[RMDB]
RNA sequence: GGGAACGACUCGAGUAGAGUCGAAAAUUUGUGGAGAAAGCUAAAAAGAAUUAGUUAUGUGGAUUAGUUGGAAGCGUUUUGGUUUUCUUGGUGGCGUAUUGGCACUAACCUUUUUAAAUGCUUGUGCUCAAAACUGAUAGUUCGCUAUCAGUUUUGAAAAAGAAACAACAACAACAAC
Reactivity to DMS in 0.01 (KOAc 150mM, MgCl2 10mM, bicine 150mM(pH8.5), 24C), signal-to-noise 2, nucleotides 027 to 126: u000u010u000g010u000g000g020a070g010a060a080a070g000c020u000a020a030a060a110a080g010a060a070u020u000a040g000u010u000a080u010g000u000g010g010a080u000u000a030g000u000u000g010g000a080a190g000c130g020u010u000u010u010g000g010u000u000u000u000c040u010u000g010g030u010g010g010c070g020u010a060u000u000g010g010c020a030c060u000a070a060c040c020u010u010u010u020u000a040a090a090u010g010c060u000u000g000u010g030c130
Reactivity to 2A3 in 0.01 (KOAc 150mM, MgCl2 10mM, bicine 150mM(pH8.5), 24C), signal-to-noise 1, nucleotides 027 to 126: u080u020u110g030u060g000g000a020g010a030a040a020g010c020u060a020a020a000a090a130g110a130a120u070u020a050g020u030u100a090u160g100u100g020g070a050u090u090a130g020u090u060g050g040a090a020g000c110g070u060u030u110u130g010g000u030u080u020u000c020u040u030g100g000u020g010g000c050g000u070a060u110u170g000g000c000a000c010u030a060a080c000c020u050u050u010u060u170a040a120a060u040g000c000u040u070g040u080g050c000
An RNA of 177 nucleotides, treated with DMS and 2A3 and read out base by base. Conditions: 150 mM KOAc, 10 mM MgCl2 and 150 mM bicine (pH 8.5), 24 C. DMS adducts were read by reverse transcription with MarathonRT. The DMS profile rests on 2,501 reads. For 2A3, 873 sequencing reads were counted.